[RMDB]
RNA sequence: GGGAACGACUCGAGUAGAGUCGAAAAGCGUACUACCUUAUGGUGUAGAGCUUGGAUUUAUGGGUCUCUAGCGUGAGAGCUCCCAAAUAGGAGCUCUUCGGGCCCAUUGUCAGCUCUACCGCAUAAGGUAUCGCAAAGCCUGCGUUCGCGCAGGCAACGCCGAUAGAUAGUUCGCUAUCUAUCGGCGAAAAGAAACAACAACAACAAC
Reactivity to 2A3 in 0.01 (KOAc 150mM, MgCl2 10mM, bicine 150mM(pH8.5), 24C), signal-to-noise 2, nucleotides 027 to 156: g000c000g070u140a140c030u000a010c030c000u000u020a010u080g100g040u110g030u040a000g000a000g020c040u150u180g160g000a090u240u300u060a020u020g010g000g050u020c080u050c090u300a130g120c110g090u270g170a050g010a010g020c000u000c020c010c050a150a240a070u290a050g000g000a000g010c000u000c000u000u020c010g000g000g040c000c000c000a000u000u000g000u020c000a000g000c000u020c000u000a000c000c000g040c000a000u020a000a000g000g000u000a000u060c010g000c020a070a070a070g000c000c000u040g040c000g010u000u110c170g000c000g040c090a010g000g000c000a000a000

Chemical mapping of a 207-nucleotide RNA with 2A3. For 2A3 the reverse transcriptase was SuperScript II with manganese. Conditions: 150 mM KOAc, 10 mM MgCl2 and 150 mM bicine (pH 8.5), 24 C.